[RMDB]
Structure probing data (2A3 and DMS) for a 207-nucleotide construct. For 2A3 the reverse transcriptase was SuperScript II with manganese. Reactivities are given for positions 27 through 156. For DMS the reverse transcriptase was MarathonRT. Source: RMDB library OK3TST, as collected in RNAgym. For 2A3, 1,947 sequencing reads were counted. The RNA was probed in 150 mM KOAc, 10 mM MgCl2 and 150 mM bicine (pH 8.5) at 24 C.
RNA sequence: GGGAACGACUCGAGUAGAGUCGAAAAUCCUAGUGCCCUGGUUCUUUGGAGUGGAGAAUGGCAUUUGGAAACCUAUGUCUGAAUGUUAGGUGUGCUUGGUAGUGUUAGUGUGUGGGCGCUCCUCGGCUUUCAGUGGACAGAGCCAGAGAAUAUGUGCCUAAUAGGCGCAUUUCGAUGCGCCUAUUAGAAAAGAAACAACAACAACAAC
Reactivity to 2A3 in 0.01 (KOAc 150mM, MgCl2 10mM, bicine 150mM(pH8.5), 24C), signal-to-noise 3, nucleotides 027 to 156: u030c000c000u030a030g020u030g030c020c010c020u030g050g010u070u030c050u060u170u110g090g000a060g020u050g010g020a020g040a060a040u040g000g010c020a000u090u010u060g050g020a100a110a070c020c050u060a120u210g070u060c020u040g050a160a080u090g030u080u080a050g070g000u050g010u020g020c030u020u050g040g030u080a050g030u020g020u120u010a070g010u020g000u010g040u060g030g020g000c010g020c020u040c020c000u040c030g020g000c000u020u080u100c040a070g040u110g070g020a040c020a090g020a000g020c030c020a020g020a000g000a030a020u220a070u190g050u070g050c040
Reactivity to DMS in 0.01 (KOAc 150mM, MgCl2 10mM, bicine 150mM(pH8.5), 24C), signal-to-noise 2, nucleotides 027 to 156: u010c000c000u000a070g020u010g000c020c030c080u000g020g000u010u000c020u000u010u020g020g010a110g060u010g030g010a090g010a100a130u000g010g000c030a080u010u000u000g010g000a080a070a130c090c050u000a100u000g020u000c040u000g010a050a060u010g010u000u010a050g010g020u010g040u010g020c020u000u000g040g020u000a080g010u000g020u010u000a080g010u000g040u020g000u010g000g020g000c030g030c030u010c020c000u010c040g030g000c020u000u000u000c040a110g030u000g020g010a090c050a070g010a030g010c020c010a130g010a120g010a070a100u000a080u010g020u000g010c100